Structure probing data (2A3 and DMS) for a 177-nucleotide construct. The DMS profile rests on 5,867 reads. The 2A3 profile rests on 26,126 reads. Conditions: 150 mM KOAc, 10 mM MgCl2 and 150 mM bicine (pH 8.5), 24 C. Values cover nucleotides 27 to 126. For 2A3 the reverse transcriptase was SuperScript II with manganese.
RNA sequence: GGGAACGACUCGAGUAGAGUCGAAAACGCAAUACAGUGAGUGGACGGAAUAAAUCCCCUUCCCACCUCCCCACUGUCCACUCACUGUCUUCCUAAGAGGAAAUAUAAAUCGGGGGUGGGAAGGGGAGAGGAGUAUUACUUUCGAGUAAUACUCCUCAAAAGAAACAACAACAACAAC
Reactivity to 2A3 in 0.01 (KOAc 150mM, MgCl2 10mM, bicine 150mM(pH8.5), 24C), signal-to-noise 9, nucleotides 027 to 126: c100g040c070a070a100u200a180c000a000g000u000g000a000g000u000g000g010a010c030g030g060a040a040u120a110a100a100u130c000c000c000c000u000u000c000c000c000a000c000c000u020c040c070c020c040a060c040u040g000u000c000c000a000c010u010c010a000c000u000g000u000c010u020u010c000c010u060a080a020g070a050g180g200a030a140a010u300a050u100a050a160a040u230c110g000g000g000g010g000u000g000g000g010a000a000g000g000g000g000a000
Reactivity to DMS in 0.01 (KOAc 150mM, MgCl2 10mM, bicine 150mM(pH8.5), 24C), signal-to-noise 3, nucleotides 027 to 126: c180g030c260a110a060u030a040c000a000g000u000g000a030g010u000g000g000a010c030g000g010a060a060u030a060a050a090u010c000c000c010c010u000u010c020c000c000a020c000c000u000c000c000c170c130a040c070u010g000u000c000c010a000c010u000c000a000c000u010g000u000c080u000u020c000c020u010a050a050g010a080g000g020a040a060a090u060a090u040a030a080a100u040c180g000g030g000g000g080u010g000g000g000a000a000g000g000g010g010a060